An RNA of 177 nucleotides, treated with 2A3 and read out base by base.
2A3 adducts were read by reverse transcription with SuperScript II with manganese.
Values cover nucleotides 27 to 126.
The RNA was probed in 150 mM KOAc, 10 mM MgCl2 and 150 mM bicine (pH 8.5) at 24 C.
Source: RMDB library OK1LIB, as collected in RNAgym.
[RMDB]
RNA sequence: GGGAACGACUCGAGUAGAGUCGAAAAUUCGCGGUGAACCUCCGACGCCAGCGCAAAGCUUUCCUUGUCAGCGGACUUCACCCACCGAUCAACGUACUUCCGUUCGCAGACAUCUGGCACAAAAUCGAUGACGACGUGCUUUCGAGCACGUCGUCAUAAAAGAAACAACAACAACAAC
Reactivity to 2A3 in 0.01 (KOAc 150mM, MgCl2 10mM, bicine 150mM(pH8.5), 24C), signal-to-noise 1, nucleotides 027 to 126: u140u030c020g070c050g090g000u040g040a080a080c000c000u060c000c000g030a010c030g080c000c010a100g070c040g090c080a090a070a000g040c040u090u040u000c050c000u000u050g090u070c000a000g020c030g080g000a040c000u020u020c190a050c110c030c000a080c010c030g000a010u220c040a000a050c020g020u050a000c040u080u110c070c120g080u050u050c040g000c020a010g040a060c000a040u030c010u010g130g000c070a000c050a010a090a000a030u090c110g080